[RMDB]
RNA sequence: GGGAACGACUCGAGUAGAGUCGAAAACGGUCUUACCGCUCAGGAGCGCUCUGCCAAGAAGGCGUAAGUGAUUUUGUCUGGUAUCAACUGUGCAGUCAAUGACAUGAUGUAGCUCCUCCGAUACCACACUCAGCCGCGUGUUCGCACGCGGCUGAGUAAAAGAAACAACAACAACAAC
Reactivity to 2A3 in 0.01 (KOAc 150mM, MgCl2 10mM, bicine 150mM(pH8.5), 24C), signal-to-noise 1, nucleotides 027 to 126: c000g100g000u040c000u080u180a220c130c070g000c000u070c060a070g040g020a000g000c030g070c050u000c140u070g000c000c000a060a070g050a000a000g080g000c000g070u000a000a110g050u030g210a190u000u050u150u110g300u070c140u000g100g000u040a060u000c020a070a020c000u100g050u080g000c000a000g080u110c000a000a060u000g000a010c040a040u170g000a110u200g020u120a030g000c000u000c000c030u000c000c000g020a060u040a100c000c000a020c040
Structure probing data (2A3) for a 177-nucleotide construct. Reactivities are rounded to 0.1 and cut off at 0 and 3. Conditions: 150 mM KOAc, 10 mM MgCl2 and 150 mM bicine (pH 8.5), 24 C.